[RMDB]
This 207-nucleotide RNA was probed chemically with DMS and 2A3.
The RNA was probed in 150 mM KOAc, 10 mM MgCl2 and 150 mM bicine (pH 8.5) at 24 C.
DMS adducts were read by reverse transcription with MarathonRT.
For DMS, 2,539 sequencing reads were counted.
RNA sequence: GGGAACGACUCGAGUAGAGUCGAAAAACGCAUCAUUCGUGAUGCGAGAACUACAGUUCCGCUCCUCUAGCACACAGAGGUCAAUUGGGUGCGACCCCCCCCUCUCCCGUGGGUCAACGGGAACCAAAAAAGACCCUUUAGUUCGCUAAAGGGUCAACUUAACACUAGACUUCGGUCUAGUGUUAAGAAAAGAAACAACAACAACAAC
Reactivity to DMS in 0.01 (KOAc 150mM, MgCl2 10mM, bicine 150mM(pH8.5), 24C), signal-to-noise 1, nucleotides 027 to 156: a090c030g040c030a000u000c000a080u010u010c240g050u000g040a030u010g000c000g010a060g000a010a120c080u000a110c130a160g000u010u030c010c020g000c010u000c030c030u010c110u000a100g050c140a100c080a020c030a100g010a090g010g000u010c080a090a100u020u010g010g000g030u010g020c040g000a300c000c000c000c010c000c010c000c010u010c040u000c000c000c000g020u000g000g000g010u000c140a070a090c000g000g030g000a030a080c130c060a000a000a110a040a070a200g000a010c010c000c000u000u000u000a000g010u000u020c300g040c020u010a020a000a020g030g010g000u000c000a000a000
Reactivity to 2A3 in 0.01 (KOAc 150mM, MgCl2 10mM, bicine 150mM(pH8.5), 24C), signal-to-noise 3, nucleotides 027 to 156: a000c000g010c000a000u010c010a020u070u140c140g150u040g000a020u020g010c020g000a060g020a000a050c110u240a090c060a090g000u030u010c000c030g040c050u050c000c000u020c020u020a020g010c040a020c000a000c020a040g010a000g030g000u040c020a040a060u140u110g090g000g010u020g010c030g140a220c010c000c000c000c000c000c000c000u040c000u010c030c000c000g000u010g010g040g010u110c030a010a000c000g000g000g000a000a000c000c010a000a060a070a050a000a000g010a000c000c000c000u020u000u000a020g010u020u080c200g060c140u000a000a000a010g010g000g000u000c000a010a000